[RMDB]
RNA sequence: GGGAACGACUCGAGUAGAGUCGAAAAAAAAAAAAAAGAUAUGGAUGUAAUGAUGACCGUCUGAUACGUUGAAAUCGGAAACGAUGGAGUAUCGCGACGCAAGUUACAUCCUAAGUCAAAAAAAAAACAUAUUACCAUGGUUCGCCAUGGUAAUAUGAAAAGAAACAACAACAACAAC
Reactivity to DMS in 0.01 (KOAc 150mM, MgCl2 10mM, bicine 150mM(pH8.5), 24C), signal-to-noise 1, nucleotides 027 to 126: a000a000a000a000a000a020a000a100a100a060g000a070u000a250u000g020g000a010u010g010u010a000a010u000g000a140u010g000a210c300c020g000u000c010u000g010a010u000a000c000g030u000u010g000a040a090a010u000c010g010g010a100a080a130c000g020a000u000g010g000a080g010u000a000u000c000g000c080g020a000c000g010c040a040a130g000u000u000a000c000a010u000c000c000u000a010a070g020u010c010a000a000a000a020a020a000a070a050a030a030
Reactivity to 2A3 in 0.01 (KOAc 150mM, MgCl2 10mM, bicine 150mM(pH8.5), 24C), signal-to-noise 1, nucleotides 027 to 126: a000a000a000a010a030a040a090a180a160a040g070a050u110a060u200g020g000a000u000g010u000a010a020u010g170a160u180g050a040c060c020g020u010c020u000g010a000u000a010c040g150u280u020g000a040a030a030u020c000g000g040a010a140a000c000g000a000u030g040g000a010g000u000a000u040c000g040c180g060a030c000g030c020a040a180g010u000u000a010c010a000u020c000c000u010a080a030g040u020c010a060a000a000a000a000a000a000a060a060a130
The record gives the reactivity of an RNA of 177 nucleotides to DMS and 2A3. Values cover nucleotides 27 to 126. For DMS the reverse transcriptase was MarathonRT. As a SHAPE reagent, 2A3 marks flexible, mostly unpaired nucleotides at the ribose 2'-OH. The RNA was probed in 150 mM KOAc, 10 mM MgCl2 and 150 mM bicine (pH 8.5) at 24 C.